[RMDB]
Structure probing data (DMS and 2A3) for a 207-nucleotide construct. It was measured as part of the RMDB library RFM130. Reactivities are rounded to 0.1 and cut off at 0 and 3. Conditions: 150 mM KOAc, 10 mM MgCl2 and 150 mM bicine (pH 8.5), 24 C. For DMS the reverse transcriptase was MarathonRT.
RNA sequence: GGGAACGACUCGAGUAGAGUCGAAAAUAGUGACCAAUCGAAAGUGCCGGAAGACGGGGUGAAGGCCGGCCGCGCAAGACCCGCAGAAGACGGUGUCAGACGCCCCCCGAGAGUCACGCCGGGUCUGCCCAUGUGUAAAUCCUUGUUCGCAAGGAAACUAUCUAUUAUGAUUCGUCAUAAUAGAUAGAAAAGAAACAACAACAACAAC
Reactivity to DMS in 0.01 (KOAc 150mM, MgCl2 10mM, bicine 150mM(pH8.5), 24C), signal-to-noise 2, nucleotides 027 to 156: u000a100g000u000g000a110c010c080a160a110u010c130g030a100a110a110g000u000g000c020c070g010g000a070a190g010a110c020g010g040g010g000u020g000a140a170g010g010c000c020g010g010c010c000g060c050g070c000a130a250g020a040c010c020c010g000c040a180g020a100a240g040a040c040g000g000u020g050u000c040a080g010a070c010g010c010c060c000c020c030c040g020a220g010a090g000u000c030a020c030g000c110c010g000g010g000u000c010u000g040c000c020c000a130u000g000u000g020u010a040a060a080u010c020c000u010u000g010u000u000c240g000c020a020a020g000g000a060a090a260
Reactivity to 2A3 in 0.01 (KOAc 150mM, MgCl2 10mM, bicine 150mM(pH8.5), 24C), signal-to-noise 3, nucleotides 027 to 156: u090a010g010u010g000a010c010c010a020a130u160c100g060a070a020a010g000u010g010c000c010g030g030a080a080g150a110c030g000g000g000g000u010g030a020a000g010g000c000c000g000g000c000c000g000c000g000c010a080a060g000a010c010c020c000g000c040a080g100a300a020g040a060c010g010g050u160g000u070c000a000g090a160c010g000c000c010c000c020c000c000g060a060g010a000g130u010c000a010c030g010c010c000g040g000g010u030c010u060g010c000c010c040a050u100g030u000g010u100a040a090a050u050c010c000u000u010g030u070u070c170g030c090a010a000g010g000a010a000a010